[RMDB]
RNA sequence: GGGAACGACUCGAGUAGAGUCGAAAAUAAGUUGAAGGCUGCGAUCUAUGAAAGCCCGCCUGGUGGAGGUAAAACUCAGGCGCUUGUGGACGUGUAUGUGAAGUUUGAGAAACGGGUGAAAGUUCUCAACAAAGUCAGUUUUCGAACUGACUUUGUUAAAAGAAACAACAACAACAAC
Reactivity to DMS in 0.01 (KOAc 150mM, MgCl2 10mM, bicine 150mM(pH8.5), 24C), signal-to-noise 3, nucleotides 027 to 126: u010a110a110g020u000u000g010a120a100g020g010c020u000g020c070g010a110u000c060u020a090u010g010a110a130a130g010c050c130c040g030c000c020u000g010g010u010g000g010a060g010g000u000a070a070a100a110c040u010c030a020g000g000c040g030c100u000u000g030u010g000g010a100c080g030u000g000u010a050u000g000u000g010a070a090g000u000u000u000g000a070g010a060a060a080c080g000g010g020u000g000a080a090a150g000u000u000c010u010c000

Structure probing data (DMS) for a 177-nucleotide construct.
Source: RMDB library OK2TRN, as collected in RNAgym.